[RMDB]
RNA sequence: GGGAACGACUCGAGUAGAGUCGAAAAGGUAAAGCCCUGAUGGACGGCCUGCUGUCCGGUAUCAAGGCGGGCCUCUCUGCGGUACUGGACUUCGCGUCCGGCAUCGCCGCCAAGAUUGCCGCGGUCAAGGGUCCGCUCCCGAAGGACCGUAAAGAGCCCUACAUCCAAUAUUCGUAUUGGAUGUAGGAAAAGAAACAACAACAACAAC
Reactivity to 2A3 in 0.01 (KOAc 150mM, MgCl2 10mM, bicine 150mM(pH8.5), 24C), signal-to-noise 4, nucleotides 027 to 156: g080g020u100a110a070a060g050c000c000c010u030g050a110u090g000g030a010c020g020g010c010c020u090g030c070u050g050u070c060c000g010g020u050a040u030c030a050a040g020g000c000g000g040g000c040c000u030c020u030c030u080g030c010g020g010u020a020c010u020g000g000a000c000u040u060c270g020c160g050u020c000c000g000g010c010a040u050c030g040c020c010g000c010c010a050a030g020a030u030u180g010c010c020g040c080g000g020u130c060a080a090g030g000g010u040c030c030g010c090u040c010c000c000g010a010a020g030g000a040c030c000g020u040a050a140a020g110a040g030c060
Reactivity to DMS in 0.01 (KOAc 150mM, MgCl2 10mM, bicine 150mM(pH8.5), 24C), signal-to-noise 3, nucleotides 027 to 156: g030g010u020a040a140a140g000c020c010c020u000g010a280u010g000g010a110c030g010g000c010c020u000g000c120u000g020u010c020c010g040g020u010a040u010c030a070a300g020g020c000g000g010g010c050c030u010c040u010c070u010g000c070g030g020u000a010c000u000g030g010a040c010u000u000c260g020c110g030u030c000c000g000g010c020a010u010c020g000c030c020g030c020c040a040a300g010a090u010u010g040c000c010g010c020g040g010u000c000a090a120g030g000g020u010c010c060g000c070u000c010c000c010g020a260a090g000g030a030c020c020g010u000a070a010a150g020a160g030c120